[RMDB]
RNA sequence: GGGAACGACUCGAGUAGAGUCGAAAAUCAUCGGUCACCUCCCGUGUUCUGUGUGCGUGGCUCGUCGUCCACGAUAGCGCCCGCGAUAGCAUACGGGGCCAUCAUCUCGUCGCAGUCAGGGCAUGCACUCGAAGAGACAGUUCGCUGUCUCUUCGAGAAAAGAAACAACAACAACAAC
Reactivity to DMS in 0.01 (KOAc 150mM, MgCl2 10mM, bicine 150mM(pH8.5), 24C), signal-to-noise 2, nucleotides 027 to 126: u000c040a080u030c050g000g010u000c050a130c040c030u000c020c000c010g030u020g010u000u030c050u010g050u000g030u000g020c000g010u010g050g030c000u000c050g000u000c060g020u000c120c130a080c070g000a010u000a050g030c080g010c000c010c010g000c070g040a040u020a070g000c110a090u010a060c000g000g000g010g020c030c050a020u020c080a080u000c030u000c010g020u000c120g030c110a110g020u000c020a220g000g020g000c020a040u010g000c070a170
Reactivity to 2A3 in 0.01 (KOAc 150mM, MgCl2 10mM, bicine 150mM(pH8.5), 24C), signal-to-noise 2, nucleotides 027 to 126: u040c010a010u080c050g080g030u020c050a070c040c060u020c000c000c000g000u050g040u010u020c020u000g060u000g050u050g020c030g030u130g030g030c010u020c030g090u030c010g060u050c050c080a190c040g010a050u050a030g050c110g010c000c000c000g110c040g040a070u050a020g000c020a030u050a150c010g020g000g020g000c010c000a080u090c000a020u020c010u010c040g080u000c020g010c010a020g000u000c030a020g020g000g010c000a000u070g000c050a060